Background: Source: RMDB library OK2TST, as collected in RNAgym. An RNA of 177 nucleotides, treated with DMS and 2A3 and read out base by base. For 2A3, 4,628 sequencing reads were counted. Conditions: 150 mM KOAc, 10 mM MgCl2 and 150 mM bicine (pH 8.5), 24 C. For 2A3 the reverse transcriptase was SuperScript II with manganese.

RNA sequence: GGGAACGACUCGAGUAGAGUCGAAAAAUGCUCGUGGUGCAACCGUUGAAGCUCGACUUGAUAAGGGUCGUGGCGCUGUUGCUACUGUUCUUGUUCAGCAAGGCACUCUUAAAGUCGGAGAUUAUAAAUGCUCAUAUGAUUUCGAUCAUAUGAGCAUAAAAGAAACAACAACAACAAC
Reactivity to DMS in 0.01 (KOAc 150mM, MgCl2 10mM, bicine 150mM(pH8.5), 24C), signal-to-noise 6, nucleotides 027 to 126: a080u010g010c020u000c030g030u000g010g020u000g010c080a060a140c060c060g020u010u010g010a100a100g010c050u000c020g010a020c010u000u000g010a160u020a060a100g010g010g010u000c100g020u000g020g010c100g030c130u000g000u010u010g010c020u010a040c070u000g010u010u010c070u000u010g010u000u020c140a090g010c030a030a180g000g000c070a090c030u000c030u000u000a070a060a070g010u000c020g010g010a070g010a100u000u000a080u010a080a090
Reactivity to 2A3 in 0.01 (KOAc 150mM, MgCl2 10mM, bicine 150mM(pH8.5), 24C), signal-to-noise 5, nucleotides 027 to 126: a010u110g000c020u020c030g090u090g020g000u070g040c030a050a080c030c030g070u040u120g130a130a030g020c010u010c000g010a020c010u030u050g060a040u130a190a040g000g000g030u040c030g010u050g000g010c040g000c040u080g070u160u130g030c030u020a040c010u030g100u140u100c020u040u050g040u050u130c020a040g040c000a070a040g030g000c020a020c030u020c010u040u060a090a070a000g020u040c050g080g000a050g010a050u110u110a110u160a130a250